Background
Structure probing data (2A3 and DMS) for a 177-nucleotide construct. For DMS, 1,869 sequencing reads were counted. The RNA was probed in 150 mM KOAc, 10 mM MgCl2 and 150 mM bicine (pH 8.5) at 24 C.
RNA sequence: GGGAACGACUCGAGUAGAGUCGAAAAGGCGUGGCUCUUUUAGAGCAGAGCGCUAAGGAAGCGCCUGAAGACAUCGCUCUGCAUUUGAAAUUAUCGAAGGUCUUUUGCGAUCGUCAUGAUUAUGCAACUAGAAUAAAAGCUUCGGCUUUUAUUCUAGAAAAGAAACAACAACAACAAC
Reactivity to 2A3 in 0.01 (KOAc 150mM, MgCl2 10mM, bicine 150mM(pH8.5), 24C), signal-to-noise 1, nucleotides 027 to 126: g000g000c030g030u060g040g060c010u060c010u000u120u100u180a020g030a010g020c020a010g030a010g020c040g000c030u000a040a000g050g060a020a060g010c000g040c000c040u050g080a070a020g050a020c020a050u030c010g000c000u000c000u020g000c010a080u090u060u140g080a090a100a050u160u090a050u130c070g020a040a000g090g000u090c030u060u120u210u180g040c040g000a010u000c030g050u030c060a020u060g060a070u020u070a060u230g040c030a020a110
Reactivity to DMS in 0.01 (KOAc 150mM, MgCl2 10mM, bicine 150mM(pH8.5), 24C), signal-to-noise 2, nucleotides 027 to 126: g000g000c010g040u000g030g020c020u000c040u010u000u000u020a080g020a090g010c030a040g010a110g010c010g020c100u010a060a070g030g020a200a170g010c050g000c000c010u010g010a070a080g000a070c090a110u000c030g000c010u000c030u000g000c030a100u020u030u010g020a040a100a070u000u000a020u000c090g030a050a050g000g020u010c010u000u010u010u010g030c050g000a020u000c060g020u000c080a040u000g000a060u000u010a080u010g000c070a070a220